[RMDB]
RNA sequence: GGGAACGACUCGAGUAGAGUCGAAAAGAUUCUGUAAUUUUAUUACAUCAAAUCACUCCAAGUGUAUAUAUUGCAGUAUGCGAUAAAUGGACUCUUUAGAUCAAACACAGUCACGACCAUGCAGAUCUCAAAGUCGGUCUACGCAUCUUUGAUCGUGACAUGUACUGUCUUUCGAGACAGUACAUGUAAAAGAAACAACAACAACAAC
Reactivity to DMS in 0.01 (KOAc 150mM, MgCl2 10mM, bicine 150mM(pH8.5), 24C), signal-to-noise 2, nucleotides 027 to 156: g000a070u000u000c010u000g020u020a030a040u000u010u010u000a030u010u000a080c000a050u000c010a090a140a100u000c000a110c100u010c040c050a080a250g000u000g010u000a050u000a090u000a050u010u000g010c060a130g030u000a050u000g010c000g030a090u000a030a080a110u010g020g000a050c040u000c030u010u010u000a100g010a070u000c030a110a090a130c050a050c030a060g010u000c020a060c110g030a040c020c010a090u020g040c000a190g000a020u000c000u000c040a070a040a150g010u000c050g020g020u000c000u000a060c040g000c090a060u010c110u000u000u010g010a060u000c010g010u000g010
Reactivity to 2A3 in 0.01 (KOAc 150mM, MgCl2 10mM, bicine 150mM(pH8.5), 24C), signal-to-noise 5, nucleotides 027 to 156: g020a050u080u060c000u040g030u020a050a040u030u170u140u230a070u120u060a030c030a030u110c060a060a140a140u130c040a060c100u090c100c030a110a060g020u020g030u010a010u000a010u010a010u070u090g010c000a020g040u160a060u100g030c030g040a020u070a110a120a090u140g040g010a010c000u030c020u100u040u090a040g010a040u050c040a050a180a060c050a010c030a090g040u050c020a020c110g050a040c040c030a010u060g000c010a030g010a030u010c020u020c090a090a110a010g040u130c100g030g010u000c030u050a020c040g000c000a030u030c080u090u080u080g090a130u020c020g030u020g010